[RMDB]
RNA sequence: GGGAACGACUCGAGUAGAGUCGAAAAAUGGGACAGCCGAGCUUACAACCACCGCAGCCACACGCUUUAUGAAGGACUUGCAUUUCACUGGGACAAAUGGAGUUGGUGAGGUAGGCCGCGGUAUAGCUAACUAGCUACGGUUCGCCGUAGCUAGUUAAAAAGAAACAACAACAACAAC
Reactivity to DMS in 0.01 (KOAc 150mM, MgCl2 10mM, bicine 150mM(pH8.5), 24C), signal-to-noise 3, nucleotides 027 to 126: a090u000g010g010g000a090c050a070g030c040c060g010a170g000c060u000u010a060c110a090a130c090c070a060c010c040g010c030a100g000c000c010a090c090a070c080g000c020u000u000u000a070u020g010a130a050g010g000a080c060u000u000g040c050a080u010u020u000c120a060c080u000g010g000g000a120c120a010a140a060u000g000g000a030g000u010u000g010g010u000g010a060g020g000u000a070g010g000c010c080g030c030g010g000u000a100u000a080g000c120
Reactivity to 2A3 in 0.01 (KOAc 150mM, MgCl2 10mM, bicine 150mM(pH8.5), 24C), signal-to-noise 2, nucleotides 027 to 126: a000u080g010g030g050a020c000a000g030c010c010g040a010g030c000u120u070a030c050a080a020c030c040a030c000c010g030c030a010g000c020c010a060c010a000c040g010c000u050u110u120a170u140g140a130a020g080g000a010c010u010u030g070c060a060u050u100u140c080a050c080u110g050g050g100a000c040a030a060a010u090g010g010a030g000u120u070g050g040u070g010a150g030g010u100a100g040g000c040c000g000c020g010g020u050a080u080a130g040c020